[RMDB]
RNA sequence: GGGAACGACUCGAGUAGAGUCGAAAAGCACUCUGUCAGGUAUUGAUCGUAGAUCUCAAGCUCGAAUCCUCCGCACAGGUCUCUAUCGGAAACAUCUGGUCCGUGUGAUAAUAGGUCCACUUUAUCUAGAAAAACAUCCUCAUCGGUUUGUGGAACAAACAGAUGGCAGAUUCGUCUGCCAUCUGUUAAAAGAAACAACAACAACAAC
Reactivity to DMS in 0.01 (KOAc 150mM, MgCl2 10mM, bicine 150mM(pH8.5), 24C), signal-to-noise 2, nucleotides 027 to 156: g020c030a060c020u010c020u010g020u010c080a080g040g000u010a080u020u000g000a100u010c100g010u020a070g000a090u000c050u000c060a090a150g000c020u000c010g000a060a130u000c020c040u000c030c020g000c070a100c080a070g000g000u000c000u010c060u010a110u000c050g020g010a130a060a090c100a050u010c050u010g020g010u000c020c020g040u010g000u000g000a080u000a100a130u010a070g020g030u010c030c000a050c020u000u000u010a080u010c020u000a130g010a030a060a090a070a110c070a090u000c010c000u000c000a100u010c040g010g020u000u000u010g000u000g000g000a060a120c080a130
Reactivity to 2A3 in 0.01 (KOAc 150mM, MgCl2 10mM, bicine 150mM(pH8.5), 24C), signal-to-noise 3, nucleotides 027 to 156: g040c010a040c070u050c040u050g050u090c030a020g020g050u090a100u100u130g060a080u060c070g040u090a050g070a130u000c040u000c100a090a040g030c030u020c040g080a100a090u100c020c010u000c030c010g010c000a050c020a060g000g070u020c020u000c000u050a080u090c030g060g000a050a100a040c050a080u070c040u080g020g060u050c050c020g070u040g040u050g070a010u040a150a090u050a110g030g020u010c010c010a020c010u040u050u030a110u060c030u030a040g080a060a080a020a000a000c010a020u060c000c070u120c030a110u160c030g070g030u040u050u110g030u080g040g080a040a050c030a040
Conditions: 150 mM KOAc, 10 mM MgCl2 and 150 mM bicine (pH 8.5), 24 C. Structure probing data (DMS and 2A3) for a 207-nucleotide construct. The DMS profile rests on 4,326 reads. DMS adducts were read by reverse transcription with MarathonRT.